Record summary: This 177-nucleotide RNA was probed chemically with 2A3 and DMS. For DMS, 4,484 sequencing reads were counted. For 2A3 the reverse transcriptase was SuperScript II with manganese. The RNA was probed in 150 mM KOAc, 10 mM MgCl2 and 150 mM bicine (pH 8.5) at 24 C.
RNA sequence: GGGAACGACUCGAGUAGAGUCGAAAAGAUAUGGAGCUUGACGCUGAUGACCGAACUCCUAAUCGGAAACGAUUAGGUUGCGCAAGGCGUAAGCUCCUAAGUCAAAAGCGCUAGUUCGCUAGCGCAACAAACCCCAAUAGUUCGCUAUUGGGGUUUGAAAAGAAACAACAACAACAAC
Reactivity to 2A3 in 0.01 (KOAc 150mM, MgCl2 10mM, bicine 150mM(pH8.5), 24C), signal-to-noise 3, nucleotides 027 to 126: g000a010u000a010u050g000g000a000g010c010u040u070g240a080c010g000c020u080g080a250u300g130a170c130c150g060a080a040c010u000c010c010u000a000a010u000c020g000g000a010a010a030c000g000a000u010u010a000g010g090u140u060g010c140g010c080a180a110g000g020c000g000u010a000a000g010c000u000c000c000u010a010a000g020u010c000a020a000a130a100g000c000g000c020u010a010g030u050u050c160g010c160u000a000g020c000g000c010a000a000
Reactivity to DMS in 0.01 (KOAc 150mM, MgCl2 10mM, bicine 150mM(pH8.5), 24C), signal-to-noise 4, nucleotides 027 to 126: g010a010u000a160u010g000g000a030g010c000u000u000g010a030c010g020c000u010g020a140u010g010a170c260c130g020a070a180c060u000c010c000u000a000a010u000c000g020g000a040a020a040c010g010a020u000u000a000g000g000u000u000g000c120g000c120a150a230g010g000c000g000u000a020a030g000c000u000c000c000u010a010a060g000u010c000a100a090a110a120g000c010g010c000u000a000g010u000u010c230g010c020u000a000g010c010g010c010a060a080
The data come from the RNA Mapping Database (RMDB), library TTRDEL.